[RMDB]
RNA sequence: GGGAACGACUCGAGUAGAGUCGAAAAAUGUGGCAGCUCCUUUAUUUCCACAGAAGAGACCUUCGACUGAUGGCUAAUGCCAUUUGCUCGGCUGUGCCAGUUGACUGGGUACCAACUGGGAGAACCAAUCGCAGGAAUACUUCGGUAUUCCUGCGAUAAAAGAAACAACAACAACAAC
Reactivity to DMS in 0.01 (KOAc 150mM, MgCl2 10mM, bicine 150mM(pH8.5), 24C), signal-to-noise 2, nucleotides 027 to 126: a030u000g010u020g010g020c090a070g000c000u000c000c020u100u000u050a070u030u010u030c000c020a090c060a000g020a050a060g000a150g010a100c060c020u000u060c000g030a050c020u030g010a000u020g020g050c000u010a050a170u020g000c010c030a000u000u030u000g000c080u010c100g000g000c100u000g010u000g000c100c020a080g010u020u000g000a010c060u020g000g000g010u050a180c110c000a000a000c000u000g010g020g000a070g040a130a120c070c130a120
Reactivity to 2A3 in 0.01 (KOAc 150mM, MgCl2 10mM, bicine 150mM(pH8.5), 24C), signal-to-noise 3, nucleotides 027 to 126: a000u140g010u080g030g000c020a030g040c020u040c020c000u040u200u030a180u090u040u000c020c010a050c010a030g120a190a010g040a020g070a060c030c000u030u060c060g020a020c020u020g010a020u040g040g000c110u250a270a070u300g000c010c000a020u040u010u040g050c060u010c010g000g020c060u030g010u030g110c000c000a000g000u010u010g060a060c060u100g010g000g120u100a050c020c030a030a050c010u010g020g040g020a070g010a020a040c040c030a020
The record gives the reactivity of an RNA of 177 nucleotides to DMS and 2A3.
The RNA was probed in 150 mM KOAc, 10 mM MgCl2 and 150 mM bicine (pH 8.5) at 24 C.
It was measured as part of the RMDB library OK1LIB.
For DMS the reverse transcriptase was MarathonRT.
For 2A3, 1,766 sequencing reads were counted.
2A3 adducts were read by reverse transcription with SuperScript II with manganese.
For DMS, 1,800 sequencing reads were counted.